[RMDB]
RNA sequence: GGGAACGACUCGAGUAGAGUCGAAAAGCAGUAGAAGAGGCGGAGGAGAGCCAGAUCAAUGUCUUAGAGGCGGCACUGCGAGUUCAAGACAAGAUAAUAACAAAGGAAGAAGAGAGUUUAAUGAUGACCUAAUAUCACGUUUCGACGUGAUAUUAGGAAAAGAAACAACAACAACAAC
Reactivity to DMS in 0.01 (KOAc 150mM, MgCl2 10mM, bicine 150mM(pH8.5), 24C), signal-to-noise 6, nucleotides 027 to 126: g020c060a070g010u010a110g030a110a080g000a100g020g000c070g030g000a120g000g000a080g010a120g010c060c070a060g010a070u000c070a070a120u000g010u000c030u000u000a130g010a120g010g000c100g010g010c060a060c100u010g000c050g020a080g000u000u010c060a050a070g010a040c080a070a100g000a050u010a060a060u010a070a090c150a020a100a070g000g010a020a030g010a050a040g000a050g010a070g010u000u000u000a070a070u010g000a080u010g000a260
Reactivity to 2A3 in 0.01 (KOAc 150mM, MgCl2 10mM, bicine 150mM(pH8.5), 24C), signal-to-noise 4, nucleotides 027 to 126: g010c000a020g020u140a010g020a180a010g020a050g060g000c040g030g030a030g000g030a030g000a010g030c020c020a010g010a030u040c010a050a090u110g030u010c020u010u090a060g000a030g030g000c030g000g000c040a040c100u080g010c030g020a040g010u020u060c030a040a000g020a020c020a010a040g040a050u130a190a030u100a100a020c040a020a080a010g050g000a030a040g020a070a010g040a010g010a000g010u030u120u140a120a140u180g090a060u130g050a030
Structure probing data (DMS and 2A3) for a 177-nucleotide construct.
For DMS, 5,883 sequencing reads were counted.
Reactivities are given for positions 27 through 126.
The data come from the RNA Mapping Database (RMDB), library OK2TRN.
DMS adducts were read by reverse transcription with MarathonRT.